[RMDB]
RNA sequence: GGGAACGACUCGAGUAGAGUCGAAAAGCCGUACGCGGACUACGUGGGCGGCAAGUUUGCCAUGGGCAUCCCCGGUACUAACGCCAUCGUGCUGCAGGCUGAAAAGCGUGAACGCGUGCUGCCCGGCGUCAGCGUGCGCAACGAAGUGACGAAGCGCGACUCAUAUAGUGUUCGCACUAUAUGAGUCAAAAGAAACAACAACAACAAC
Reactivity to DMS in 0.01 (KOAc 150mM, MgCl2 10mM, bicine 150mM(pH8.5), 24C), signal-to-noise 1, nucleotides 027 to 156: g000c040c010g050u000a020c010g000c030g010g010a080c040u000a040c040g020u010g050g000g020c040g000g010c020a050a030g000u000u000u010g020c020c050a110u010g010g010g020c080a120u010c040c020c000c030g000g000u010a160c060u000a050a150c000g020c030c060a170u000c100g020u020g050c000u020g030c080a070g020g010c030u000g010a060a090a160a180g000c050g020u000g030a070a130c150g010c040g020u000g010c040u010g060c040c010c030g040g020c070g000u000c020a030g000c000g020u000g000c040g000c050a140a090c050g000a070a110g010u000g050a160c020g010a080a080g010c000g000c130
Reactivity to 2A3 in 0.01 (KOAc 150mM, MgCl2 10mM, bicine 150mM(pH8.5), 24C), signal-to-noise 2, nucleotides 027 to 156: g060c030c000g030u000a010c010g010c010g040g040a080c030u070a050c120g110u130g030g010g000c000g000g000c010a010a010g060u070u080u030g010c020c060a120u150g040g030g000c070a150u140c020c010c000c010g000g020u060a150c070u120a130a050c100g000c020c010a120u110c060g090u060g030c010u030g020c010a040g060g000c030u070g030a070a060a020a030g040c060g030u120g090a110a050c050g010c030g030u030g000c000u010g000c000c000c020g010g040c030g000u020c010a010g010c000g030u030g000c010g000c000a000a070c040g100a130a040g070u080g080a030c050g050a070a020g060c070g010c060

The record gives the reactivity of an RNA of 207 nucleotides to DMS and 2A3. The data come from the RNA Mapping Database (RMDB), library OK3TST. DMS adducts were read by reverse transcription with MarathonRT. For 2A3 the reverse transcriptase was SuperScript II with manganese. Conditions: 150 mM KOAc, 10 mM MgCl2 and 150 mM bicine (pH 8.5), 24 C. For DMS, 3,078 sequencing reads were counted.